[RMDB]
Structure probing data (2A3 and DMS) for a 177-nucleotide construct.
RNA sequence: GGGAACGACUCGAGUAGAGUCGAAAAGUAUCAGGACGUCCUGUCAUGAAAGAGCCAUGGCCAGAGGCUAUGUUAUGCCCUACAUACAAGACUGCUGUGCCUAGCACAACAAACAAGGUAGCAAUGCGCUUGAAAUGCUAUUCGUAGCAUUUCAAGCAAAAGAAACAACAACAACAAC
Reactivity to 2A3 in 0.01 (KOAc 150mM, MgCl2 10mM, bicine 150mM(pH8.5), 24C), signal-to-noise 4, nucleotides 027 to 126: g020u020a050u150c030a040g040g070a020c050g040u020c010c020u020g010u030c030a020u030g070a100a100a070g070a010g030c010c010a020u040g010g010c010c020a050g080a090g130g020c030u020a040u080g080u130u110a070u160g010c030c000c000u020a030c010a010u080a020c040a040a040g050a050c040u080g020c010u020g110u050g040c020c020u000a020g010c020a020c020a100a050c020a040a130a030c030a070a040g080g040u050a030g020c030a090a120u130g030c050
Reactivity to DMS in 0.01 (KOAc 150mM, MgCl2 10mM, bicine 150mM(pH8.5), 24C), signal-to-noise 4, nucleotides 027 to 126: g010u000a080u000c020a040g010g020a110c110g000u000c020c020u010g030u010c120a060u000g000a090a100a080g010a100g010c050c000a030u000g000g000c030c020a120g000a160g020g010c020u010a050u000g010u010u000a070u010g010c010c020c010u020a140c090a040u010a030c070a040a060g010a030c060u000g010c010u000g030u000g010c020c060u000a060g000c030a040c080a040a040c090a060a070a080c130a050a050g010g000u010a020g020c080a090a090u000g020c210

For 2A3 the reverse transcriptase was SuperScript II with manganese.
Conditions: 150 mM KOAc, 10 mM MgCl2 and 150 mM bicine (pH 8.5), 24 C.